[RMDB]
RNA sequence: GGGAACGACUCGAGUAGAGUCGAAAAGAUAACUGGGUGGGAAAAAUGCCCCUGCACUCCGUAGUCGGCCUGGAACAGCAAGUCUAACUGGUCUGUGCAGCCAAACCUCUCUUUGGUUUGGUUUGGAAUGCUCUAGAUUCUUCGGAAUCUAGAGCAUAAAAGAAACAACAACAACAAC
Reactivity to DMS in 0.01 (KOAc 150mM, MgCl2 10mM, bicine 150mM(pH8.5), 24C), signal-to-noise 2, nucleotides 027 to 126: g000a140u000a040a150c110u000g000g010g040u010g020g010g000a030a050a080a060a110u010g000c040c000c010c070u000g030c050a060c030u000c020c040g010u010a090g030u000c040g020g010c030c030u000g000g010a070a070c120a080g000c040a080a080g000u000c080u010a100a130c070u000g010g000u020c030u000g000u000g010c060a090g000c000c000a000a020a010c000c000u000c300u000c170u000u000u000g000g010u000u000u000g000g010u000u000u000g010g000a100